[RMDB]
RNA sequence: GGGAACGACUCGAGUAGAGUCGAAAAUGCACCAGUCUCCCCUAUCGUGGCGCGUGAGGAGGAGCAGGUGCCCAUGGCCGCACUCACGGACGCUCACUGCGUGACCGAAUUGCCUGCCGCGGUAGGCCGAGGGAGUACUAUUCGUAGUACUCCCUCGAAAAGAAACAACAACAACAAC
Reactivity to DMS in 0.01 (KOAc 150mM, MgCl2 10mM, bicine 150mM(pH8.5), 24C), signal-to-noise 6, nucleotides 027 to 126: u050g010c050a070c020c020a140g010u020c000u010c010c020c020c010u000a050u000c030g030u010g010g010c060g040c300g010u000g000a040g010g000a300g000g000a130g000c040a070g000g010u010g000c010c020c030a090u020g020g010c010c060g010c020a060c040u000c060a050c070g010g000a090c030g010c010u000c070a100c070u010g000c010g010u020g010a140c020c010g000a300a090u010u010g000c020c020u010g000c000c000g010c070g010g000u010a030g000g010c260
Reactivity to 2A3 in 0.01 (KOAc 150mM, MgCl2 10mM, bicine 150mM(pH8.5), 24C), signal-to-noise 9, nucleotides 027 to 126: u140g020c040a050c040c000a040g110u040c040u030c020c010c000c000u040a030u070c020g030u040g060g010c030g010c030g060u040g040a050g030g020a030g000g020a030g010c040a060g020g030u050g010c000c000c010a090u100g060g000c030c010g030c040a060c040u060c020a040c020g050g020a030c040g010c020u030c020a210c050u060g000c010g080u080g090a090c000c010g020a040a040u050u040g010c000c010u020g010c000c010g010c030g040g000u020a010g010g010c020
Source: RMDB library OK1LIB, as collected in RNAgym. An RNA of 177 nucleotides, treated with DMS and 2A3 and read out base by base. For DMS the reverse transcriptase was MarathonRT. The reactions ran in a buffer of 150 mM KOAc, 10 mM MgCl2 and 150 mM bicine (pH 8.5), at 24 C. Reactivities are given for positions 27 through 126. The 2A3 profile rests on 22,577 reads.